Source: RMDB library M2PK50, as collected in RNAgym. Structure probing data (2A3 and DMS) for a 177-nucleotide construct. For 2A3 the reverse transcriptase was SuperScript II with manganese. DMS adducts were read by reverse transcription with MarathonRT. The 2A3 profile rests on 2,769 reads.
RNA sequence: GGGAACGACUCGAGUAGAGUCGAAAAUGUGACAUGUUCGCAUGUCACAAGCCAGGUAGUUGCUAUCUCAAUUACCUGUACAGGCCAUGGUCUGGAUAGGAAAGCUCUACCUAUUCGUAGGUAGAAAUUUAGUCUUGGUAUUCGUACCAAGACUAAAAAAAGAAACAACAACAACAAC
Reactivity to 2A3 in 0.01 (KOAc 150mM, MgCl2 10mM, bicine 150mM(pH8.5), 24C), signal-to-noise 2, nucleotides 027 to 126: u090g010u000g000a010c000a010u010g010u070u120c240g030c140a000u020g000u010c010a000c010a000a000g000c010c020a010g020g000u020a010g010u000u060g030c110u150a130u260c060u000c110a000a090u030u030a020c000c010u020g020u020a080c000a010g000g000c010c060a130u260g080g030u020c020u080g050g040a110u120a110g170g040a140a070a020g010c020u000c010u010a000c000c000u010a030u040u070c210g030u010a000g000g020u010a010g020a040a070a020
Reactivity to DMS in 0.01 (KOAc 150mM, MgCl2 10mM, bicine 150mM(pH8.5), 24C), signal-to-noise 5, nucleotides 027 to 126: u000g020u000g010a000c000a000u000g010u000u010c230g020c010a010u010g000u000c000a000c000a040a080g000c110c010a060g000g000u000a020g000u000u000g010c150u000a100u000c120u000c030a030a040u000u000a020c000c000u000g000u000a030c080a050g000g000c010c050a100u010g040g010u000c030u000g000g000a060u000a040g010g010a100a090a100g010c150u000c000u000a010c000c000u000a010u000u000c180g010u000a000g000g000u000a000g010a000a050a090